[RMDB]
RNA sequence: GGGAACGACUCGAGUAGAGUCGAAAAGCGAAGCGAAGCUAUGUGCGUGAGGAAUUUCAUUCCUUCUUCUGACCGUGAUGCCAAGGUACCGACAGCUACGCACAUACGGAUGGAAGGUUCGCUCCAAGAGUCCAGUAGGAUUCGUCCUACUGGACUCAAAAGAAACAACAACAACAAC
Reactivity to 2A3 in 0.01 (KOAc 150mM, MgCl2 10mM, bicine 150mM(pH8.5), 24C), signal-to-noise 3, nucleotides 027 to 126: g000c010g010a010a000g070c020g050a060a000g000c040u000a010u030g020u000g000c000g030u050g030a020g010g040a030a040u120u250u210c070a040u080u000c040c000u040u060c020u100u000c030u010g090a110c000c060g060u100g080a110u110g050c030c040a050a100g050g000u050a050c040c020g030a050c010a040g010c030u080a010c020g010c010a000c010a000u030a010c050g100g030a090u090g040g090a050a020g060g080u000u000c010g000c000u000c000c000a050a040
Reactivity to DMS in 0.01 (KOAc 150mM, MgCl2 10mM, bicine 150mM(pH8.5), 24C), signal-to-noise 3, nucleotides 027 to 126: g020c080g010a020a010g000c040g000a220a120g000c080u000a010u000g020u000g010c000g020u000g000a050g000g000a020a020u000u000u010c280a070u000u010c010c000u000u000c110u000u000c050u000g010a130c060c030g000u010g000a170u000g020c070c030a080a080g000g040u000a070c050c060g000a100c080a020g000c300u010a030c030g000c000a010c020a010u020a000c110g020g010a160u000g000g030a140a180g000g010u000u000c000g010c010u020c010c000a070a130

An RNA of 177 nucleotides, treated with 2A3 and DMS and read out base by base. Reactivities are given for positions 27 through 126. The DMS profile rests on 1,981 reads. For 2A3 the reverse transcriptase was SuperScript II with manganese. The data come from the RNA Mapping Database (RMDB), library OK2TST. Conditions: 150 mM KOAc, 10 mM MgCl2 and 150 mM bicine (pH 8.5), 24 C.